Source: RMDB library RFMREP, as collected in RNAgym.
Structure probing data (DMS and 2A3) for a 177-nucleotide construct.
The DMS profile rests on 1,948 reads.
The 2A3 profile rests on 4,219 reads.
For 2A3 the reverse transcriptase was SuperScript II with manganese.
[RMDB]
RNA sequence: GGGAACGACUCGAGUAGAGUCGAAAAAUUGAGGCGCAACAGCAUCUGUUGCAACUCACAGUCUGGGGCAUCAAGCAGCUCCAGGCAAGAGUCCUGGCUGUGGAAAGAUACCUAAAGGAUCAACAGCGCCUAAUGUUAUGUUCGCAUAACAUUAGGCAAAAGAAACAACAACAACAAC
Reactivity to DMS in 0.01 (KOAc 150mM, MgCl2 10mM, bicine 150mM(pH8.5), 24C), signal-to-noise 3, nucleotides 027 to 126: a160u020u000g000a010g000g000c300g010c000a000a000c000a000g020c220a110u000c020u000g030u000u000g050c010a030a230c010u000c000a060c300a150g000u000c010u000g010g010g000g010c020a050u000c220a080a160g000c230a070g000c010u000c010c000a000g020g020c040a070a050g000a090g040u000c020c010u010g040g030c030u030g010u000g000g000a040a160a070g000a080u000a090c030c040u020a060a100a150g020g010a030u000c020a150a060c050a070g010c050
Reactivity to 2A3 in 0.01 (KOAc 150mM, MgCl2 10mM, bicine 150mM(pH8.5), 24C), signal-to-noise 4, nucleotides 027 to 126: a000u110u060g000a000g020g000c020g000c010a010a010c000a000g060c060a200u180c070u060g000u000u010g000c020a000a010c000u000c000a020c010a010g000u000c000u000g000g000g000g000c000a060u030c110a300a120g090c060a060g000c040u030c000c000a000g000g000c000a010a030g070a010g050u000c010c000u020g100g000c000u000g020u040g070g050a120a110a040g020a040u270a300c000c010u120a200a130a100g040g010a030u020c020a020a040c010a000g010c010